Overview: This 177-nucleotide RNA was probed chemically with 2A3 and DMS. For 2A3 the reverse transcriptase was SuperScript II with manganese.
RNA sequence: GGGAACGACUCGAGUAGAGUCGAAAAGAUAUGGAGCGUUCCACCGAUGACGAAGAACAGGCUUCGGAAACGAAGCCUGGGAGUCACGGUGGAGACGCUCCUAAGUCAAAGACGCGUUCGCGCGUCACAUUUAUCUUCUCUUCGGAGAAGAUAAAUGAAAAGAAACAACAACAACAAC
Reactivity to 2A3 in 0.01 (KOAc 150mM, MgCl2 10mM, bicine 150mM(pH8.5), 24C), signal-to-noise 6, nucleotides 027 to 126: g030a010u070a050u250g010g010a010g010c010g000u020u020c010c000a000c000c000g300a300u030g000a000c020g180a300a180g000a110a020c000a000g010g000c010u000u010c000g020g030a060a060a020c020g000a010a000g000c000c000u000g000g010g000a010g000u000c000a000c010g000g000u000g000g000a020g000a000c010g000c000u010c000c000u010a000a000g000u010c040a030a050a110g000a000c000g020c010g020u060u130c300g000c000g000c000g150u020c000a000
Reactivity to DMS in 0.01 (KOAc 150mM, MgCl2 10mM, bicine 150mM(pH8.5), 24C), signal-to-noise 7, nucleotides 027 to 126: g010a060u010a300u010g000g000a010g020c000g020u000u000c000c000a010c000c000g020a160u000g020a010c000g010a140a140g010a160a210c010a000g000g000c000u000u000c000g000g010a110a110a210c000g000a010a000g000c000c000u000g000g000g000a100g010u000c000a010c010g000g000u000g000g000a010g010a010c000g010c000u000c000c000u000a010a060g010u010c050a100a130a120g010a010c000g010c000g020u000u020c290g030c010g010c010g010u000c010a090
The reactions ran in a buffer of 150 mM KOAc, 10 mM MgCl2 and 150 mM bicine (pH 8.5), at 24 C. Values are in units of 0.01, from 0 to 300, in steps of 10.